[RMDB]
RNA sequence: GGGAACGACUCGAGUAGAGUCGAAAACAUAAAGACUGGGACGAUGUCAUCAUCUUACAGAAUUUCCAGAUUCCUCAGAGUAUCAAUCUUGCUACCAUGAUAAAGGACAAGGCAAUAUCCCAAACAACAGUUUAUCUACGUUCGCGUAGAUAAACUGAAAAGAAACAACAACAACAAC
Reactivity to 2A3 in 0.01 (KOAc 150mM, MgCl2 10mM, bicine 150mM(pH8.5), 24C), signal-to-noise 3, nucleotides 027 to 126: c030a040u190a070a110a010g080a070c030u010g030g030g020a010c060g020a070u060g040u100c010a080u110c010a030u000c060u070u110a040c050a030g120a090a100u050u050u060c020c000a010g050a130u020u050c010c010u020c040a040g020a010g080u070a020u120c050a060a050u040c070u030u010g000c010u080a120c000c020a040u130g040a090u280a200a100a030g030g010a020c020a020a040g000g000c010a030a000u020a050u100c020c000c020a070a050a030c030a040a010
Reactivity to DMS in 0.01 (KOAc 150mM, MgCl2 10mM, bicine 150mM(pH8.5), 24C), signal-to-noise 2, nucleotides 027 to 126: c110a160u020a040a130a140g000a160c030u000g020g000g020a060c090g000a090u010g010u000c140a100u000c060a030u000c050u010u000a100c130a040g020a100a090u000u010u000c060c020a080g010a140u010u000c010c030u000c120a070g020a150g010u000a060u010c060a090a060u000c040u000u000g000c030u010a030c030c030a040u000g000a030u000a040a080a090g010g000a040c080a030a040g000g000c040a030a050u000a070u000c000c000c020a060a060a080c290a070a130
Background
The record gives the reactivity of an RNA of 177 nucleotides to 2A3 and DMS. For DMS, 1,423 sequencing reads were counted. Reactivities are given for positions 27 through 126. It was measured as part of the RMDB library OK2TST.